Chemical mapping of a 177-nucleotide RNA with 2A3 and DMS. 2A3 adducts were read by reverse transcription with SuperScript II with manganese. The data come from the RNA Mapping Database (RMDB), library TTRDES. DMS adducts were read by reverse transcription with MarathonRT. As a SHAPE reagent, 2A3 marks flexible, mostly unpaired nucleotides at the ribose 2'-OH. Conditions: 150 mM KOAc, 10 mM MgCl2 and 150 mM bicine (pH 8.5), 24 C.
[RMDB]
RNA sequence: GGGAACGACUCGAGUAGAGUCGAAAAGAUAUGGAGGAUGUAGGGAGCUCUGGGUCGGAAACGACCCAGGAGCGAAGAACUACAAGUCCUCCUAAGUCAAAACUGACGGUCCUUCGGGACCGUCAGAGUAACUAAUGCAGUUCGCUGCAUUAGUUACAAAAGAAACAACAACAACAAC
Reactivity to 2A3 in 0.01 (KOAc 150mM, MgCl2 10mM, bicine 150mM(pH8.5), 24C), signal-to-noise 2, nucleotides 027 to 126: g010a000u020a010u050g000g000a000g000g000a010u100g000u000a000g030g000g050a060g000c010u000c010u010g020g020g000u000c010g020g000a030a000a000c000g000a010c010c040c000a020g050g010a010g010c000g020a090a020g000a010a000c010u000a000c000a050a030g190u030c000c010u000c010c000u000a000a000g000u000c010a010a030a180a290c010u010g000a010c000g000g010u000c010c010u070u230c280g050g020g000a000c000c000g020u000c010a000g000a000
Reactivity to DMS in 0.01 (KOAc 150mM, MgCl2 10mM, bicine 150mM(pH8.5), 24C), signal-to-noise 2, nucleotides 027 to 126: g020a020u000a000u010g000g010a020g010g010a110u000g010u010a010g000g010g000a010g020c000u000c000u010g000g010g030u000c020g020g000a020a010a020c000g010a030c010c000c010a000g000g000a010g050c000g010a080a160g000a160a240c010u000a000c000a080a250g020u000c000c010u000c000c000u000a000a080g000u010c010a130a110a140a240c000u000g010a010c010g010g010u000c010c000u000u020c240g040g000g000a010c000c000g000u000c000a020g000a090